[RMDB]
RNA sequence: GGGAACGACUCGAGUAGAGUCGAAAAGAUAUGGAGCCAUGGGGAGUCGGAGAAACAUCGGAAACGAUGUGUAACGACAUCGAUCCCGCUGGCUCCUAAGUCAAACUCUGGGGUUCGCCCCAGAGAACUAAUCGAAUCGCUUCGGCGAUUCGAUUAGAAAAGAAACAACAACAACAAC
Reactivity to DMS in 0.01 (KOAc 150mM, MgCl2 10mM, bicine 150mM(pH8.5), 24C), signal-to-noise 1, nucleotides 027 to 126: g000a020u010a300u000g010g000a020g020c000c000a110u000g020g000g020g000a100g070u000c000g000g000a080g000a230a130a010c000a000u000c000g010g000a170a060a150c000g000a000u000g000u000g000u000a100a300c000g000a000c040a160u050c280g050a300u000c000c000c010g000c060u000g000g010c020u000c000c000u000a010a040g000u000c000a200a050a170c000u000c000u010g000g000g000g020u000u020c300g040c000c000c000c000a010g000a010g000a060a300

Source: RMDB library TTRDEL, as collected in RNAgym.
Chemical mapping of a 177-nucleotide RNA with DMS.
The RNA was probed in 150 mM KOAc, 10 mM MgCl2 and 150 mM bicine (pH 8.5) at 24 C.
For DMS the reverse transcriptase was MarathonRT.
High DMS reactivity at an A or C suggests that its Watson-Crick edge is free.